Structure probing data (2A3 and DMS) for a 207-nucleotide construct. The 2A3 profile rests on 3,709 reads. Conditions: 150 mM KOAc, 10 mM MgCl2 and 150 mM bicine (pH 8.5), 24 C. For DMS the reverse transcriptase was MarathonRT.
[RMDB]
RNA sequence: GGGAACGACUCGAGUAGAGUCGAAAACCGAAUUGGUUCGCCAAUUCGGAAAAACCGUAGGUGUGUCCCAGACACAUCGAUCACAGCUUCGAAAGAGGCUGUGGGAGUGUCUGGACACGCACCUAAACGGAAAAACAAGUAGCUUCGGCUACUUGAACCAUCAGUGAAAGUUCGCUUUCACUGAUGGAAAAGAAACAACAACAACAAC
Reactivity to 2A3 in 0.01 (KOAc 150mM, MgCl2 10mM, bicine 150mM(pH8.5), 24C), signal-to-noise 3, nucleotides 027 to 156: c000c010g010a000a010u010u010g010g010u060u070c160g060c070c010a020a010u000u000c000g010g000a170a030a000a050a000c020c020g010u020a030g000g000u000g010u000g000u020c000c000c000a000g000a010c000a000c000a270u240c050g020a020u090c020a000c000a000g000c000u000u010c010g100a150a120a080g000a000g000g000c000u000g000u000g000g040g000a040g000u010g000u000c000u000g000g010a000c000a000c000g030c000a010c000c000u060a190a110a000c030g010g030a080a030a030a010a060c000a010a000g030u010a000g000c010u040u070c300g080g000c000u000a000c010u010u010g000a010a020
Reactivity to DMS in 0.01 (KOAc 150mM, MgCl2 10mM, bicine 150mM(pH8.5), 24C), signal-to-noise 1, nucleotides 027 to 156: c000c000g000a000a010u030u000g010g000u000u000c300g060c010c000a010a000u000u030c010g040g010a000a060a070a070a070c000c000g080u000a010g000g010u000g010u010g010u010c060c000c000a060g010a020c010a000c010a210u010c100g000a250u010c040a000c000a000g000c020u010u000c010g030a180a180a300g020a050g010g030c000u000g010u010g110g010g010a110g010u000g010u000c030u020g000g000a130c030a010c000g000c010a020c030c000u010a030a090a120c000g000g000a090a060a070a130a140c010a000a020g010u010a000g000c000u000u000c300g060g000c000u000a030c000u030u000g000a060a150